[RMDB]
RNA sequence: GGGAACGACUCGAGUAGAGUCGAAAAGACUGCGUGCACUUGAGACGAUAUCGAGCCGGAAAUUAAUCGAUAAUGUCUCGCGUAGUGGAUACGAUCCGGCAAGUAUCGACUACUUGUGCUCGUAGGAGCGGCGUAUCACCUUCGGGUGAUACGCCGCAAAAGAAACAACAACAACAAC
Reactivity to 2A3 in 0.01 (KOAc 150mM, MgCl2 10mM, bicine 150mM(pH8.5), 24C), signal-to-noise 1, nucleotides 027 to 126: g080a000c000u000g000c010g000u060g000c000a000c000u060u030g030a000g000a000c070g000a000u000a000u140c040g010a020g010c010c000g030g170a050a170a050u290u290a090a180u090c010g000a000u040a080a140u300g030u000c050u060c090g060c000g040u010a020g000u000g050g000a000u000a000c000g000a060u040c000c000g000g000c010a180a000g000u000a000u000c000g020a050c020u150a120c000u000u000g000u030g050c010u020c010g000u030a060g000g010a030